[RMDB]
RNA sequence: GGGAACGACUCGAGUAGAGUCGAAAACAGUUCGGACAGAAUCGUGAAAGAGUUGGGUCACGGCUGCGGCGGCACAGUGUACCUUUGUGAGGAAGGGAGCUGCGCAAAGGUCAUGUUCGACAUGGAAGACGAAGAGCAAUGCGCCGAGCUCGCAGAAGUUAUAGAAUAGUUUCGACUAUUCUAUAACAAAAGAAACAACAACAACAAC
Reactivity to DMS in 0.01 (KOAc 150mM, MgCl2 10mM, bicine 150mM(pH8.5), 24C), signal-to-noise 2, nucleotides 027 to 156: c060a080g020u010u000c010g040g000a150c040a130g000a060a100u000c010g030u020g010a080a090a090g000a130g010u000u000g010g010g020u000c030a080c030g010g020c020u010g020c030g030g020c040g000g010c020a030c010a050g000u000g020u040a240c020c000u000u000u000g020u000g010a160g020g020a060a080g000g010g000a300g040c030u000g010c020g000c030a030a030a080g000g030u000c030a040u000g000u000u000c030g030a080c040a120u000g030g040a070a070g010a120c040g000a080a140g010a120g010c030a060a130u000g020c000g000c020c030g010a080g020c020u000c000g000c030a090g000a110a150
Reactivity to 2A3 in 0.01 (KOAc 150mM, MgCl2 10mM, bicine 150mM(pH8.5), 24C), signal-to-noise 7, nucleotides 027 to 156: c030a010g060u110u080c030g040g030a030c030a130g090a090a070u090c030g010u040g070a050a060a030g110a010g020u050u050g040g000g010u040c030a000c040g030g000c020u030g000c010g030g000c010g030g000c020a010c010a030g040u040g070u190a050c000c000u020u040u020g080u100g040a100g000g100a030a050g040g020g020a050g020c030u070g010c010g000c010a060a020a000g020g000u030c020a030u050g010u040u050c040g040a050c060a100u130g050g080a050a040g060a040c060g030a050a040g010a010g020c040a050a150u070g010c020g000c020c020g020a040g010c040u060c030g000c010a020g030a130a010

An RNA of 207 nucleotides, treated with DMS and 2A3 and read out base by base. The reactions ran in a buffer of 150 mM KOAc, 10 mM MgCl2 and 150 mM bicine (pH 8.5), at 24 C. For DMS the reverse transcriptase was MarathonRT. The 2A3 profile rests on 8,083 reads.